[RMDB]
RNA sequence: GGGAACGACUCGAGUAGAGUCGAAAACGACGAGCUGGUCUACGGUCUGCUGGCCAACGGCUUCACCGAGAAGUGCUACGACGGCAAGGCGUUCUUCGCUACCGACCAUCCUGUCGGCAAGGACAAGGCAAGCAACAAGGGCACCGCGAAGCUGAGCAGUCCUUCUACUGUUCGCAGUAGAAGGACUAAAAGAAACAACAACAACAAC
Reactivity to 2A3 in 0.01 (KOAc 150mM, MgCl2 10mM, bicine 150mM(pH8.5), 24C), signal-to-noise 1, nucleotides 027 to 156: c040g040a050c030g040a010g040c040u080g000g140u130c150u150a050c150g060g000u020c090u130g060c070u080g080g000c040c050a140a010c070g000g000c000u060u040c050a050c020c050g060a050g000a160a000g000u010g060c000u050a130c010g100a020c030g040g000c020a050a060g020g000c050g020u040u070c000u060u050c030g000c070u080a060c010c060g000a010c000c000a090u020c020c020u080g030u090c000g060g000c020a030a050g000g000a010c000a030a060g050g040c000a000a020g020c000a000a070c020a110a000g000g000g000c040a060c140c000g030c050g110a030a010g000c020u030g000a000g070c010